[RMDB]
RNA sequence: GGGAACGACUCGAGUAGAGUCGAAAAGCCGGAUCGACGGGAGCGCCGUGACCAGGGUGUCCUGGCCUUUGCGCGGCACCAACCGCGACAGACACACUACCGUGGGCCGCUCGCCUAGCCGAUAGCGGUCCCCGGAGUGCUUCGGCACUCCGGGGACAAAAGAAACAACAACAACAAC
Reactivity to 2A3 in 0.01 (KOAc 150mM, MgCl2 10mM, bicine 150mM(pH8.5), 24C), signal-to-noise 3, nucleotides 027 to 126: g040c010c000g030g040a150u090c060g080a120c070g050g000g060a070g010c030g000c040c030g030u040g030a170c010c050a050g060g090g010u280g020u230c030c060u040g090g000c000c030u060u040u140g000c000g000c000g050g000c070a090c130c030a050a090c010c000g040c000g070a070c010a010g040a010c000a000c010a030c100u190a160c020c050g050u060g000g000g030c020c010g000c020u000c020g050c000c010u020a030g040c030c000g020a010u080a030g040c040g010
Reactivity to DMS in 0.01 (KOAc 150mM, MgCl2 10mM, bicine 150mM(pH8.5), 24C), signal-to-noise 2, nucleotides 027 to 126: g000c000c020g000g000a060u020c000g030a110c110g000g010g000a140g040c140g000c020c000g000u000g010a090c000c090a000g000g020g050u040g040u000c030c020u010g010g000c070c050u000u020u020g000c010g010c020g010g070c050a200c100c210a210a210c000c020g080c010g000a090c060a030g000a060c140a040c030a110c100u050a070c190c010g000u020g000g010g020c040c000g000c030u000c050g010c010c000u030a070g000c100c000g000a100u000a030g100c060g000
Chemical mapping of a 177-nucleotide RNA with 2A3 and DMS.
Conditions: 150 mM KOAc, 10 mM MgCl2 and 150 mM bicine (pH 8.5), 24 C.
2A3 adducts were read by reverse transcription with SuperScript II with manganese.
Values cover nucleotides 27 to 126.